RNA sequence: GGGAACGACUCGAGUAGAGUCGAAAAGCGCGCGCUAGCUACGAUGCAUAUGCAUGCAUCGCGUACGCGUAAUUAAUAUCGUAGCUAAUUACGUAUAAUAUCGAUAUUACGUAAUUAUAGCCGCGUAGAACUUCGUGAUUUUCGAAUCACGAAGUUCAAAAGAAACAACAACAACAAC
Reactivity to DMS in 0.01 (KOAc 150mM, MgCl2 10mM, bicine 150mM(pH8.5), 24C), signal-to-noise 2, nucleotides 027 to 126: g000c050g010c000g000c240g020c070u000a080g040c010u000a030c000g010a010u000g010c070a040u000a050u000g020c050a100u000g010c130a100u020c120g000c110g010u000a040c170g010c000g010u000a040a120u000u020a120a120u010a060u000c040g000u000a040g000c000u010a000a010u000u000a000c000g000u000a010u010a090a110u000a240u010c230g000a140u000a070u010u000a000c000g020u000a000a010u000u000a190u010a010g010c000c010g000c000g020u000a110
Reactivity to 2A3 in 0.01 (KOAc 150mM, MgCl2 10mM, bicine 150mM(pH8.5), 24C), signal-to-noise 2, nucleotides 027 to 126: g030c000g010c000g000c050g000c030u030a010g000c000u040a010c020g000a010u040g000c020a040u070a040u190g090c080a020u050g010c010a100u110c080g000c020g010u060a020c090g000c010g030u020a020a060u100u110a080a060u100a010u100c000g000u000a000g020c000u010a000a020u010u000a010c000g000u020a030u010a120a130u070a130u220c050g050a070u030a030u240u020a000c000g000u010a000a000u000u050a090u070a090g000c000c000g000c000g000u010a060